[RMDB]
RNA sequence: GGGAACGACUCGAGUAGAGUCGAAAAGAUUCGUCAGCCGCAUGCCCAGGAGGCCGCGAUCUUCAAGGCUACGGCGCGGAUAGGUCCGCGCUGAUCGUUUUCCUCCAACGACGCUAUGGCGUCUUUCAAAAUCGGCAUCGGUUCGCCGAUGCCGAAAUCGUUUACCUAUCUUCGGAUAGGUAAACGAAAAAGAAACAACAACAACAAC
Reactivity to 2A3 in 0.01 (KOAc 150mM, MgCl2 10mM, bicine 150mM(pH8.5), 24C), signal-to-noise 1, nucleotides 027 to 156: g020a030u070u250c040g020u040c050a030g060c010c060g110c070a090u150g040c000c000c000a020g010g010a040g010g000c000c000g000c010g060a060u070c010u160u150c120a050a080g080g000c070u080a040c060g020g000c000g020c020g020g000a060u120a180g210g090u000c000c010g010c010g060c000u000g010a020u020c000g030u000u000u060u120c010c050u050c000c050a090a100c090g000a000c020g000c040u060a090u220g230g000c000g080u000c030u010u170u120c090a180a160a050a140u010c000g000g000c000a020u000c000g020g070u000u050c190g000c030c000g010a000u000g000c000c010g000a000a000a000
Background: The record gives the reactivity of an RNA of 207 nucleotides to 2A3. For 2A3, 495 sequencing reads were counted. The reactions ran in a buffer of 150 mM KOAc, 10 mM MgCl2 and 150 mM bicine (pH 8.5), at 24 C.